[RMDB]
About this RNA
An RNA of 177 nucleotides, treated with 2A3 and read out base by base. Values cover nucleotides 27 to 126. It was measured as part of the RMDB library RFM100.
RNA sequence: GGGAACGACUCGAGUAGAGUCGAAAAAGCUGACUGCUGCUACGGCAGCAGUCAGCACCUUAACGAGAAUCUGAUACGGUUCCAGUCAGACCAGAGGGGAAAGACGCUAAUACAGGUUCGCAACCAAUGUAGCUGAACUGUUCGCAGUUCAGCUACAAAAAGAAACAACAACAACAAC
Reactivity to 2A3 in 0.01 (KOAc 150mM, MgCl2 10mM, bicine 150mM(pH8.5), 24C), signal-to-noise 1, nucleotides 027 to 126: a000g030c020u000g070a070c000u030g000c000u000g000c000u040a100c300g140g000c000a010g030c000a000g000u100c000a010g040c000a000c020c000u120u300a150a030c120g000a050g100a060a000u060c010u030g070a090u040a160c070g030g010u010u030c000c000a020g000u010c010a000g050a060c000c030a020g050a060g090g200g020g040a000a010a000g050a000c010g030c160u010a090a000u070a140c030a030g000g090u000u040c010g020c050a000a050c070c040a000a120

The RNA was probed in 150 mM KOAc, 10 mM MgCl2 and 150 mM bicine (pH 8.5) at 24 C. 2A3 adducts were read by reverse transcription with SuperScript II with manganese.